The record gives the reactivity of an RNA of 177 nucleotides to 2A3 and DMS. DMS adducts were read by reverse transcription with MarathonRT. The RNA was probed in 150 mM KOAc, 10 mM MgCl2 and 150 mM bicine (pH 8.5) at 24 C.

RNA sequence: GGGAACGACUCGAGUAGAGUCGAAAAGACCUUUGUUUCGACAAAGGUCAAACGCCGAUGGUAGUGUGGGGUCUCCCCAUGGGAGAGUAGGGAACUGCCAGGAAACAGGUUGUUUCGACAACCUGAACCUUGAACCGGAAUUCGUUCCGGUUCAAGGAAAAGAAACAACAACAACAAC
Reactivity to 2A3 in 0.01 (KOAc 150mM, MgCl2 10mM, bicine 150mM(pH8.5), 24C), signal-to-noise 1, nucleotides 027 to 126: g000a010c000c010u000u020u010g020u000u040u050c100g040a020c000a000a000a000g000g020u000c000a070a000a000c060g120c050c030g170a210u080g000g040u040a040g030u020g070u130g080g050g000g100u050c010u010c000c040c030c020a060u090g020g040g000a010g000a000g040u230a030g060g010g010a040a010c000u000g050c020c010a030g030g060a020a110a020c000a000g000g000u000u010g010u040u040u050c150g060a020c000a000a000c000c020u020g030a030a030
Reactivity to DMS in 0.01 (KOAc 150mM, MgCl2 10mM, bicine 150mM(pH8.5), 24C), signal-to-noise 2, nucleotides 027 to 126: g000a010c000c000u000u010u000g000u000u000u050c210g020a030c000a010a020a000g000g000u000c000a030a120a100c150g010c040c010g040a090u000g000g030u000a060g000u000g000u000g030g000g000g000u000c020u000c000c000c020c220a070u010g030g020g030a000g000a040g010u010a130g000g000g000a180a010c020u000g000c010c000a090g010g000a100a130a210c020a000g000g000u000u000g010u000u000u000c190g000a060c010a000a000c000c000u000g000a090a070
Annotation: For 2A3, 1,130 sequencing reads were counted.